[RMDB]
RNA sequence: GGGAACGACUCGAGUAGAGUCGAAAAGUGUGGGGGUCUGAGGAUGAAUCCUGGUCUGCGUUGCCUGCAAGGAUUGUUACAGCUGUAUGGUCUUUUUUUGUCUCCUGAUGCAGACAAUCGCCAUAAAGUAGUUAAGGCAUUUCGAUGCCUUAACUACAAAAGAAACAACAACAACAAC
Reactivity to 2A3 in 0.01 (KOAc 150mM, MgCl2 10mM, bicine 150mM(pH8.5), 24C), signal-to-noise 2, nucleotides 027 to 126: g160u160g000u080g020g000g030g000g000u000c010u010g040a020g070g000a040u060g070a020a050u020c000c010u030g040g040u020c030u020g030c080g090u070u070g030c000c000u020g020c030a050a010g040g030a070u020u080g010u060u060a060c020a020g050c010u040g040u120a060u070g020g020u040c020u130u040u040u040u030u120u050g030u010c020u050c010c030u080g060a120u120g050c000a000g010a010c000a010a010u080c060g020c020c010a040u080a060a060a000
Reactivity to DMS in 0.01 (KOAc 150mM, MgCl2 10mM, bicine 150mM(pH8.5), 24C), signal-to-noise 3, nucleotides 027 to 126: g020u000g020u000g010g000g000g020g010u000c060u010g010a090g000g000a100u010g010a110a120u010c040c040u000g000g020u000c060u000g030c070g020u000u000g000c040c010u010g020c050a080a060g000g010a070u000u000g010u000u000a080c110a090g010c070u010g010u000a050u000g020g000u020c020u000u000u000u010u000u010u000g000u010c030u010c070c090u020g010a120u020g020c120a040g010a020c060a030a030u000c150g020c050c070a040u010a030a060a100